An RNA of 177 nucleotides, treated with 2A3 and DMS and read out base by base.
RNA sequence: GGGAACGACUCGAGUAGAGUCGAAAACGAUCGAUCAGUAUGCGCGAUCCGGAUCAGCGGCGCAGCGAGCGCUGAUCUCUGAUCCGCGUACGAUCGCGCAGGCGCGAUCGCGCCACAGUACUAGUACGUAUGCGCGUAGAUUCGUCUACGCGCAUACAAAAGAAACAACAACAACAAC
Reactivity to 2A3 in 0.01 (KOAc 150mM, MgCl2 10mM, bicine 150mM(pH8.5), 24C), signal-to-noise 1, nucleotides 027 to 126: c010g020a100u080c030g000a040u070c060a050g000u050a010u030g000c000g000c030g020a010u000c010c050g010g010a010u000c000a010g040c010g090g000c060g000c010a080g270c100g160a070g010c010g000c000u020g040a100u050c090u000c020u060g010a000u010c010c010g010c010g000u050a010c050g000a000u000c010g000c000g000c000a070g010g010c020g000c030g040a140u120c060g000c000g000c010c030a130c050a010g100u080a070c140u110a060g200u080a040c110
Reactivity to DMS in 0.01 (KOAc 150mM, MgCl2 10mM, bicine 150mM(pH8.5), 24C), signal-to-noise 3, nucleotides 027 to 126: c040g000a060u010c030g000a050u010c050a180g030u000a080u000g000c030g000c050g000a010u000c020c200g000g000a010u000c000a020g000c080g000g000c050g010c000a220g010c190g010a230g000c010g010c000u000g000a090u010c090u000c010u000g000a000u000c000c010g010c300g010u000a020c130g010a010u000c000g030c040g000c050a020g000g060c050g000c040g020a070u010c080g000c030g030c010c040a080c210a060g010u000a040c110u000a130g000u000a060c150

DMS adducts were read by reverse transcription with MarathonRT. Reactivities are given for positions 27 through 126. It was measured as part of the RMDB library OK2TRN. Conditions: 150 mM KOAc, 10 mM MgCl2 and 150 mM bicine (pH 8.5), 24 C.